[RMDB]
RNA sequence: GGGAACGACUCGAGUAGAGUCGAAAAGUUUUGGCUUGGCCAACAAUUAUUACAAGGAAAACCAUGAAAACACUGGUUGUAGCUCUUGGGGGCAACGCCUUACUCCAGCGCGGUGAGGCGCUGACGAGCUAGGUGACUAGUUCGCUAGUCACCUAGCAAAAGAAACAACAACAACAAC
Reactivity to DMS in 0.01 (KOAc 150mM, MgCl2 10mM, bicine 150mM(pH8.5), 24C), signal-to-noise 2, nucleotides 027 to 126: g030u000u000u000u010g000g000c010u010u000g010g010c000c030a010a000c130a050a050u010u000a100u000u000a110c070a050a100g030g010a180a090a030a040c000c010a020u010g010a110a110a110a060c240a070c220u000g010g000u020u000g000u010a020g020c100u000c030u000u000g000g000g010g020g020c050a020a070c090g020c000c000u000u010a020c030u000c050c030a070g000c150g000c140g000g010u020g000a030g030g010c000g000c020u000g000a070c180g000a100
Reactivity to 2A3 in 0.01 (KOAc 150mM, MgCl2 10mM, bicine 150mM(pH8.5), 24C), signal-to-noise 1, nucleotides 027 to 126: g040u010u050u080u140g000g000c050u050u120g160g030c030c020a030a020c020a020a020u180u100a050u080u140a110c050a050a020g090g040a080a100a000a020c020c000a000u090g100a010a060a030a040c080a020c080u000g000g030u000u010g080u060a020g020c010u000c000u110u000g000g000g000g100g000c000a000a020c010g030c000c000u000u010a010c010u000c010c020a040g060c030g000c010g110g100u100g070a020g040g090c000g000c000u010g030a020c040g020a040
Chemical mapping of a 177-nucleotide RNA with DMS and 2A3. It was measured as part of the RMDB library OK2TST. Reactivities are given for positions 27 through 126. 2A3 adducts were read by reverse transcription with SuperScript II with manganese. DMS adducts were read by reverse transcription with MarathonRT.